[RMDB]
RNA sequence: GGGAACGACUCGAGUAGAGUCGAAAAUCUUUCCGACGCCGGAGUCUCCAUGCACGUCGCGGCGCUGCGCAAGGAACUCGACGACCCGCUGUUUACCAGGACCGGUGCCGGGCUGGCGUUCACGCCCAUUCCAUAUCCCAUUCGUGGGAUAUGGAAUAAAAGAAACAACAACAACAAC
Reactivity to DMS in 0.01 (KOAc 150mM, MgCl2 10mM, bicine 150mM(pH8.5), 24C), signal-to-noise 5, nucleotides 027 to 126: u020c110u010u000u020c020c040g000a090c110g010c030c020g020g010a080g000u000c040u010c030c050a140u020g010c040a050c070g000u020c050g020c090g010g000c040g010c050u000g000c030g010c090a070a100g000g030a080a050c050u010c030g000a120c110g030a090c040c010c010g000c070u010g000u000u010u020a080c070c050a090g000g000a110c080c030g020g010u020g010c050c030g000g000g000c070u000g000g000c050g000u010u000c060a080c090g000c010c020c050
Reactivity to 2A3 in 0.01 (KOAc 150mM, MgCl2 10mM, bicine 150mM(pH8.5), 24C), signal-to-noise 9, nucleotides 027 to 126: u030c020u020u040u020c030c030g020a020c030g010c020c010g060g020a050g030u020c030u010c080c020a050u110g010c040a020c050g050u040c030g040c070g080g010c020g030c080u050g010c010g000c030a060a110g030g020a050a050c010u020c040g060a060c040g060a080c030c000c010g040c050u050g040u080u110u080a100c030c010a040g020g080a050c030c050g060g020u050g030c030c010g010g030g010c030u020g020g010c020g030u070u090c040a040c070g030c000c010c000

An RNA of 177 nucleotides, treated with DMS and 2A3 and read out base by base.
For 2A3 the reverse transcriptase was SuperScript II with manganese.
The RNA was probed in 150 mM KOAc, 10 mM MgCl2 and 150 mM bicine (pH 8.5) at 24 C.